[RMDB]
RNA sequence: GGGAACGACUCGAGUAGAGUCGAAAAGAUAUGGACGGUCCAGAGAGGCCAAUCAUGGUCGGAAACGACCAUGGAGCUCCCCACCUCUGUACCGUCCUAAGUCAAAAGAGAGCCUUCGGGCUCUCAACCAAUAAUAGGUGUUCGCACCUAUUAUUGGAAAAGAAACAACAACAACAAC
Reactivity to DMS in 0.01 (KOAc 150mM, MgCl2 10mM, bicine 150mM(pH8.5), 24C), signal-to-noise 5, nucleotides 027 to 126: g010a030u000a300u000g000g010a010c010g020g000u000c040c020a010g000a020g010a140g020g010c110c150a070a060u000c000a010u000g000g000u000c000g000g000a090a100a200c000g010a010c000c000a000u000g000g010a120g000c120u000c020c030c010c050a300c130c000u000c010u010g000u000a010c000c000g010u000c000c000u000a000a060g000u010c020a110a070a080a110g000a020g000a000g010c010c000u010u010c220g030g010g010c000u000c000u000c010a030a120
Reactivity to 2A3 in 0.01 (KOAc 150mM, MgCl2 10mM, bicine 150mM(pH8.5), 24C), signal-to-noise 1, nucleotides 027 to 126: g000a020u050a050u030g010g000a000c000g000g000u020c040c000a000g040a000g020a030g000g110c100c060a040a030u110c000a010u000g010g010u000c020g020g020a140a070a100c020g000a020c040c060a010u020g000g000a080g000c060u260c000c050c010c030a100c000c020u010c000u000g020u020a000c000c000g010u010c000c000u000a000a010g040u010c020a000a000a250a050g020a000g000a000g010c010c000u070u080c300g070g020g000c000u010c010u000c000a000a010

Overview:
Chemical mapping of a 177-nucleotide RNA with DMS and 2A3. The reactions ran in a buffer of 150 mM KOAc, 10 mM MgCl2 and 150 mM bicine (pH 8.5), at 24 C. 2A3 adducts were read by reverse transcription with SuperScript II with manganese. DMS adducts were read by reverse transcription with MarathonRT. For 2A3, 3,414 sequencing reads were counted. It was measured as part of the RMDB library TTRDEL.